[RMDB]
RNA sequence: GGGAACGACUCGAGUAGAGUCGAAAAGAUAUGGACCGUGUAGGCUAGCGAUGUCGGAAACGACUCGCUUGGACCCUACUGCGGUCCUAAGUCAAAAGUUCCAACUUUCUUCGGAAAGUUGGAACAACUGUAUUAGGCAGUUCGCUGCCUAAUACAGAAAAGAAACAACAACAACAAC
Reactivity to 2A3 in 0.01 (KOAc 150mM, MgCl2 10mM, bicine 150mM(pH8.5), 24C), signal-to-noise 2, nucleotides 027 to 126: g020a010u030a020u080g000g010a010c000c010g010u020g010u020a010g010g050c050u020a000g020c010g050a070u300g020u000c000g000g000a060a020a000c020g000a010c000u000c010g000c040u040u060g020g060a120c000c020c000u020a040c040u140g070c000g020g000u000c010c000u000a010a000g010u020c000a040a010a030a170g000u000u010c000c000a000a000c000u000u020u000c010u050u080c140g160g010a010a000a000g010u000u000g000g000a000a000c000a000a000
Reactivity to DMS in 0.01 (KOAc 150mM, MgCl2 10mM, bicine 150mM(pH8.5), 24C), signal-to-noise 3, nucleotides 027 to 126: g010a040u000a140u010g010g010a020c010c010g050u000g010u000a010g010g000c030u000a030g010c000g000a030u010g040u000c000g010g000a080a020a080c000g020a010c010u000c000g010c000u000u010g020g000a140c260c000c000u000a000c010u010g070c000g000g010u000c000c000u000a010a030g000u020c020a090a060a120a120g000u000u000c000c010a000a000c000u000u000u010c000u000u010c180g020g000a010a000a010g010u000u000g010g000a000a000c000a020a080